An RNA of 177 nucleotides, treated with 2A3 and DMS and read out base by base. The reactions ran in a buffer of 150 mM KOAc, 10 mM MgCl2 and 150 mM bicine (pH 8.5), at 24 C. 2A3 is a SHAPE reagent: it acylates the 2'-hydroxyl of flexible nucleotides of all four kinds. Source: RMDB library OK2TST, as collected in RNAgym.
RNA sequence: GGGAACGACUCGAGUAGAGUCGAAAAGCUGUCUCAGUGGGGAGAAACCUUGCACAAUACCCAGGCUUUAUUGGGCAGAGGGCCCUGCAGCCUUCCACAGUGCAUUGUGUCCCUGGGUACUCGAGACCUUAGCACCGCAAUUCGUUGCGGUGCUAAGAAAAGAAACAACAACAACAAC
Reactivity to 2A3 in 0.01 (KOAc 150mM, MgCl2 10mM, bicine 150mM(pH8.5), 24C), signal-to-noise 1, nucleotides 027 to 126: g030c010u020g000u030c000u000c010a050g030u090g030g000g030g000a090g030a030a110a010c000c010u000u000g000c020a000c010a050a200u080a090c000c020c050a070g110g000c040u300u130u090a270u270u110g000g000g020c020a040g090a120g070g160g000c030c000c000u070g000c060a000g030c030c000u030u020c040c020a050c040a060g000u020g070c000a040u010u040g030u020g030u040c060c020c020u020g260g060g030u090a040c040u020c060g030a010g040a000c000
Reactivity to DMS in 0.01 (KOAc 150mM, MgCl2 10mM, bicine 150mM(pH8.5), 24C), signal-to-noise 1, nucleotides 027 to 126: g030c090u000g010u000c020u010c020a070g040u000g030g020g000g000a110g020a080a080a100c010c000u000u000g030c000a020c000a160a170u000a100c060c090c030a030g010g020c150u010u000u000a040u000u000g000g010g030c130a240g000a080g000g000g010c010c000c010u030g030c260a080g000c000c000u010u000c050c140a170c300a030g000u000g030c000a000u000u000g000u000g000u000c010c000c000u020g000g000g000u000a040c030u000c170g020a030g010a030c040